Conditions: 150 mM KOAc, 10 mM MgCl2 and 150 mM bicine (pH 8.5), 24 C.
Chemical mapping of a 170-nucleotide RNA with 2A3 and DMS.
RNA sequence: GGGAACGACUCGAGUAGAGUCGAAAACAUGGUUAACCAAUUGGCUUAUAGCUCUAGUGCAAAUGGCAGCCUGGUUGGCACAACUUUGCAGGGCAAGCCUAUUGGUAUGUUCUUCCCUUAUGACAUCGUAGAUAGAGGUUCGCCUCUAUCAAAAGAAACAACAACAACAAC
Reactivity to 2A3 in 0.01 (KOAc 150mM, MgCl2 10mM, bicine 150mM(pH8.5), 24C), signal-to-noise 9, nucleotides 027 to 129: c020a040u100g170g000u200u220a020a010c000c000a000a000u010u030g000g000c000u040u070a070u120a250g010c000u000c030u080a100g200u030g060c000a000a010a040u070g050g020c060a010g040c020c000u140g230g070u160u210g050g000c010a010c010a080a110c040u000u000u000g000c010a000g000g000g000c010a000a000g000c010c000u010a000u000u000g000g000u020a010u030g010u020u010c030u020u010c010c000c000u030u070a250u100g060a040c040a100u130c100g050u030a030
Reactivity to DMS in 0.01 (KOAc 150mM, MgCl2 10mM, bicine 150mM(pH8.5), 24C), signal-to-noise 9, nucleotides 027 to 129: c010a020u030g000g000u060u080a130a040c030c010a000a000u020u030g010g020c020u000u000a140u060a260g030c010u030c030u000a140g070u050g000c020a000a000a000u000g030g070c210a130g010c020c010u040g040g030u080u070g000g040c000a030c060a080a120c180u020u020u010g000c020a020g000g000g000c000a000a000g020c020c000u000a000u020u010g010g020u010a020u000g010u010u010c150u000u050c020c010c030u030u030a070u030g030a050c160a080u030c100g020u050a100